[RMDB]
RNA sequence: GGGAACGACUCGAGUAGAGUCGAAAAGAUAUGGAGCCAUGACUCGCAAUAGCCAAUGGGAUCCCAUGGUCGGAAACGACCAUGAACUCCCAUUGGCUAUUGAACUACGAGACAUGGCUCCUAAGUCGAUAGAAUCUGUGUUCGCACAGAUUCUAUCAAAAGAAACAACAACAACAAC
Reactivity to DMS in 0.01 (KOAc 150mM, MgCl2 10mM, bicine 150mM(pH8.5), 24C), signal-to-noise 3, nucleotides 027 to 126: g010a100u000a300u010g000g000a030g010c010c010a000u000g020a130c000u000c000g010c010a000a000u000a010g000c000c000a010a010u010g000g010g000a020u000c130c200c010a000u010g010g000u010c000g000g010a130a110a270c000g030a010c000c000a000u000g000a130a120c150u010c000c000c000a040u000u000g000g000c000u000a000u010u000g000a070a050c180u000a300c020g010a030g010a120c010a020u000g000g010c000u010c000c000u000a000a060g010u010c140
Conditions: 150 mM KOAc, 10 mM MgCl2 and 150 mM bicine (pH 8.5), 24 C. Structure probing data (DMS) for a 177-nucleotide construct. It was measured as part of the RMDB library TTRINS. For DMS the reverse transcriptase was MarathonRT. The DMS profile rests on 3,271 reads.